[RMDB]
RNA sequence: GGGAACGACUCGAGUAGAGUCGAAAAAAUUAAGCAUGAACAAUUGAAAGAUUUUACAAAGUAUAUCUAUCAUAUACCUGCGGUGUAUCAUCCUUGGAGAAGAAAUGAACAUACACUGAACAUAGAAACAACUAAACUUUCUAGAUAAAUGGAACUAGACGAUAAUAUCCUUCGGGAUAUUAUCGUCAAAAGAAACAACAACAACAAC
Reactivity to 2A3 in 0.01 (KOAc 150mM, MgCl2 10mM, bicine 150mM(pH8.5), 24C), signal-to-noise 2, nucleotides 027 to 156: a000a010u300u190a060a000g000c040a060u020g030a110a090c070a180a190u150u160g000a050a010a010g110a070u120u220u210u300a110c130a100a130a010g070u010a020u000a010u050c030u000a090u030c070a090u050a000u030a190c000c050u060g060c020g000g000u000g010u020a010u090c010a060u010c030c000u010u100g130g000a040g010a030a020g000a000a080a030u090g010a010a010c010a000u090a010c010a000c000u010g020a040a020c010a000u140a060g010a050a080a020c100a040a010c060u060a040a070a020c020u050u090u020c070u020a060g020a100u120a140a090a010u070g010g050a060a000c080u130a070